[RMDB]
RNA sequence: GGGAACGACUCGAGUAGAGUCGAAAAGAAGAACUGGAGGUGGAUGAGCCAGGCUGCUUUCUGGCACUAUCGCCUUGAUUCUUUGACACCACAUCCUCCUCACUGCCUUUGCUCCCUUUGCCAUCUGCAGAAAGUGCUGUCUGGCAAAUGGAAUUCAUACUAAAUUAGGGUUCGCCCUAAUUUAGUAAAAAGAAACAACAACAACAAC
Reactivity to 2A3 in 0.01 (KOAc 150mM, MgCl2 10mM, bicine 150mM(pH8.5), 24C), signal-to-noise 6, nucleotides 027 to 156: g020a000a000g030a030a030c110u200g140g020a010g030g010u060g020g040a020u020g040a020g020c000c000a010g030g020c100u180g060c030u200u240u110c020u000g010g030c020a020c070u090a080u100c020g010c020c000u010u040g030a060u050u020c020u030u030u060g070a060c040a050c050c030a060c010a090u060c010c040u020c010c010u050c020a090c080u070g020c030c000u080u080u100g040c020u050c000c000c000u000u020u000g000c010c010a060u050c100u060g010c010a050g090a220a260a050g240u030g020c010u020g050u160c080u000g010g000c000a010a000a010u030g010g030a040a040u130u120c060a020
Reactivity to DMS in 0.01 (KOAc 150mM, MgCl2 10mM, bicine 150mM(pH8.5), 24C), signal-to-noise 3, nucleotides 027 to 156: g000a090a020g010a040a040c050u000g040g030a050g010g020u010g020g020a080u000g000a210g010c000c010a040g000g020c230u000g020c140u000u020u000c030u000g000g010c000a120c050u010a080u000c060g030c000c010u010u010g020a080u000u000c020u000u000u010g030a170c080a150c040c050a110c050a080u000c030c010u010c030c010u010c020a100c060u010g000c020c020u000u000u000g010c030u000c010c010c000u000u000u000g020c010c000a030u000c040u000g030c000a070g010a160a110a210g010u000g040c020u000g010u010c300u000g010g010c030a020a020a050u000g010g010a060a060u000u000c040a300

Background
Conditions: 150 mM KOAc, 10 mM MgCl2 and 150 mM bicine (pH 8.5), 24 C. An RNA of 207 nucleotides, treated with 2A3 and DMS and read out base by base. For 2A3, 4,768 sequencing reads were counted. 2A3 adducts were read by reverse transcription with SuperScript II with manganese.